Structure probing data (2A3 and DMS) for a 177-nucleotide construct. For 2A3, 598 sequencing reads were counted. The data come from the RNA Mapping Database (RMDB), library OK1LIB. For DMS the reverse transcriptase was MarathonRT. For DMS, 1,337 sequencing reads were counted.
RNA sequence: GGGAACGACUCGAGUAGAGUCGAAAAGACGGCGCAUUUUCCAGUUUAGCCCUCAAGAGAUGGCUGGAGAGUGAGGAAGUUGAAUUGCAGCUUAACACAACAAAAACUGGUGUGGCGGACAUAGAAAUCCGCAGUGCGGAUUCGUCCGCACUGCGGAAAAAGAAACAACAACAACAAC
Reactivity to 2A3 in 0.01 (KOAc 150mM, MgCl2 10mM, bicine 150mM(pH8.5), 24C), signal-to-noise 2, nucleotides 027 to 126: g050a040c040g010g000c000g000c060a000u000u040u000u210c000c000a000g000u040u050u020a000g030c010c000c020u100c070a110a100g170a000g000a100u120g000g000c040u060g000g110a090g020a020g010u070g020a170g090g120a050a060g010u070u050g040a200a300u110u280g110c030a030g000c000u010u050a090a040c050a080c050a040a220c070a110a100a000a030a080c010u060g020g010u060g000u030g020g020c020g000g000a000c000a030u080a070g150a020a090a000
Reactivity to DMS in 0.01 (KOAc 150mM, MgCl2 10mM, bicine 150mM(pH8.5), 24C), signal-to-noise 1, nucleotides 027 to 126: g010a150c080g000g060c050g000c020a140u000u040u020u020c050c020a130g000u000u000u020a130g020c030c010c050u000c110a050a040g020a160g000a040u000g000g000c000u010g040g000a100g000a120g000u000g010a080g020g030a030a120g000u000u000g040a210a050u050u060g020c120a050g020c000u020u000a060a040c050a010c050a090a090c120a070a060a040a180a010c140u070g000g010u000g000u010g000g020c000g000g000a200c130a110u010a060g000a070a160a060